Chemical mapping of a 177-nucleotide RNA with DMS. The DMS profile rests on 3,043 reads. Reactivities are rounded to 0.1 and cut off at 0 and 3. DMS adducts were read by reverse transcription with MarathonRT. The RNA was probed in 150 mM KOAc, 10 mM MgCl2 and 150 mM bicine (pH 8.5) at 24 C.

RNA sequence: GGGAACGACUCGAGUAGAGUCGAAAAAUGGUGGCCAUACACGUGUCCGCCAGGCGCCGCAUCUUGUCCUGAUGGGCCGCCACGGCCCCGUCGAUCGUGGGGGCCUCGAGCCCGGGGUGGUGGCGCGGCUUCAAUACCUCUUCGGAGGUAUUGAAGCAAAAGAAACAACAACAACAAC
Reactivity to DMS in 0.01 (KOAc 150mM, MgCl2 10mM, bicine 150mM(pH8.5), 24C), signal-to-noise 2, nucleotides 027 to 126: a020u010g000g010u000g000g020c000c000a020u020a070c300a140c300g010u000g010u020c010c000g000c020c000a040g000g010c070g010c020c000g000c000a030u040c020u020u000g000u020c010c010u000g000a130u020g000g000g010c000c020g000c210c180a060c180g000g000c010c010c010c000g010u060c030g050a150u050c210g000u010g060g020g000g010g010c000c000u050c090g000a150g000c030c000c010g000g000g020g040u000g000g080u000g010g030c000g000c020g030